[RMDB]
RNA sequence: GGGAACGACUCGAGUAGAGUCGAAAAGACACGACGGAGACGUCGUGUCAAAGAGUGGGAAACCACUCAAAGAGCCACAGCUUCGGCUGUGGCUCAAGGCGCGGCACCGUCCGCGGAACAGACGGAACAUUAUGGUACGUUUCGACGUACCAUAAUGAAAAGAAACAACAACAACAAC
Reactivity to 2A3 in 0.01 (KOAc 150mM, MgCl2 10mM, bicine 150mM(pH8.5), 24C), signal-to-noise 2, nucleotides 027 to 126: g000a010c000a000c020g010a000c000g000g020a050g030a050c000g010u000c000g000u000g000u000c000a010a000a000g000a000g000u010g000g010g000a010a060a080c000c000a000c000u000c000a030a040a000g030a000g010c000c000a010c000a000g020c000u100u160c290g110g010c000u010g000u010g010g000c000u000c010a000a010g010g000c000g000c010g000g040c040a040c150c030g050u090c000c010g000c020g020g040a040a040c040a030g080a030c020g020g010a090a020
Reactivity to DMS in 0.01 (KOAc 150mM, MgCl2 10mM, bicine 150mM(pH8.5), 24C), signal-to-noise 3, nucleotides 027 to 126: g000a010c000a010c010g000a010c010g010g010a270g000a260c020g020u000c000g020u000g000u010c000a020a060a090g000a030g030u000g000g000g000a130a110a190c000c000a010c010u000c000a050a060a090g000a040g020c000c000a020c000a000g020c010u000u020c240g020g020c000u000g050u000g010g000c000u000c010a000a050g010g020c060g020c000g000g000c040a190c040c040g000u000c000c000g000c010g020g010a040a070c170a080g010a060c050g000g000a160a300
Source: RMDB library OK2TRN, as collected in RNAgym. Chemical mapping of a 177-nucleotide RNA with 2A3 and DMS. The RNA was probed in 150 mM KOAc, 10 mM MgCl2 and 150 mM bicine (pH 8.5) at 24 C. 2A3 adducts were read by reverse transcription with SuperScript II with manganese. The 2A3 profile rests on 4,721 reads.